[RMDB]
RNA sequence: GGGAACGACUCGAGUAGAGUCGAAAAAGCUUUGCGCAGUGGCAAUAUCGUAGCCAGUGAGGUUUAUCCGAGGCGCGAUUAUUGCUAAUUGAAAACUUUUCCCAAUACCCCGCCGUGACGACUUGAACUAUACAAGUAAGUUCGCUUACUUGUAUAGAAAAGAAACAACAACAACAAC
Reactivity to DMS in 0.01 (KOAc 150mM, MgCl2 10mM, bicine 150mM(pH8.5), 24C), signal-to-noise 9, nucleotides 027 to 126: a020g010c110u000u000u010g020c140g020c070a050g020u000g000g000c000a010a010u000a020u000c000g010u000a110g040c000c000a130g020u030g020a130g000g010u010u030u020a140u040c010c000g000a160g010g010c010g000c000g010a010u010u020a000u000u000g000c010u000a020a040u000u010g000a100a030a060a050c020u000u000u010u000c000c000c010a110a140u020a190c040c010c010c020g020c060c040g010u000g010a070c090g000a080c060u000u000g000a090a180
Reactivity to 2A3 in 0.01 (KOAc 150mM, MgCl2 10mM, bicine 150mM(pH8.5), 24C), signal-to-noise 9, nucleotides 027 to 126: a000g040c080u080u070u090g060c120g010c040a040g020u010g030g000c000a000a000u000a000u010c010g010u060a140g010c000c010a080g040u160g180a140g050g070u160u240u220a100u130c010c010g020a080g000g000c010g000c010g010a010u090u090a000u010u080g000c000u020a050a050u030u050g050a010a010a010a030c010u020u020u030u030c000c000c000a010a010u080a070c010c010c000c010g010c020c030g070u050g030a050c060g010a020c020u020u040g010a080a040
An RNA of 177 nucleotides, treated with DMS and 2A3 and read out base by base.
The reactions ran in a buffer of 150 mM KOAc, 10 mM MgCl2 and 150 mM bicine (pH 8.5), at 24 C.
2A3 adducts were read by reverse transcription with SuperScript II with manganese.